RNA sequence: GGGAACGACUCGAGUAGAGUCGAAAAUAGCUGAGGCGUAUAUUGAAAUGAGAAAUGCUAAAGAACCGUAUAUGCCGAGAUACGGCCGUCAGCGUAAUUUACGAGACCAGAGUCUUGCUCGGGUUGCGUCUAUCAUGUGGUUCGCCACAUGAUAGACAAAAGAAACAACAACAACAAC
Reactivity to DMS in 0.01 (KOAc 150mM, MgCl2 10mM, bicine 150mM(pH8.5), 24C), signal-to-noise 3, nucleotides 027 to 126: u000a160g030c010u010g010a150g010g020c000g030u000a070u000a140u000u000g010a110a120a100u000g000a140g000a080a110a050u000g020c030u000a070a110a100g010a160a100c060c050g020u000a020u000a030u010g040c080c060g000a070g000a060u000a010c020g000g030c040c060g040u010c050a020g010c020g010u020a100a070u000u000u000a120c030g010a090g030a060c040c080a100g000a100g000u000c090u000u000g010c020u000c010g000g010g010u000u000g010c170
Reactivity to 2A3 in 0.01 (KOAc 150mM, MgCl2 10mM, bicine 150mM(pH8.5), 24C), signal-to-noise 2, nucleotides 027 to 126: u090a000g020c020u010g000a020g040g000c010g050u050a040u000a040u200u160g090a130a100a160u190g010a060g080a060a140a030u090g000c030u090a120a070a040g040a080a030c030c000g040u040a020u010a010u090g070c030c000g010a000g000a070u030a020c050g060g030c050c030g120u010c020a040g040c010g030u040a030a100u030u100u060a070c060g010a000g020a020c010c020a090g010a040g120u040c030u100u110g030c010u000c020g040g000g000u050u060g030c030

Structure probing data (DMS and 2A3) for a 177-nucleotide construct. Source: RMDB library OK2TRN, as collected in RNAgym. Reactivities are given for positions 27 through 126. DMS adducts were read by reverse transcription with MarathonRT. The DMS profile rests on 2,278 reads.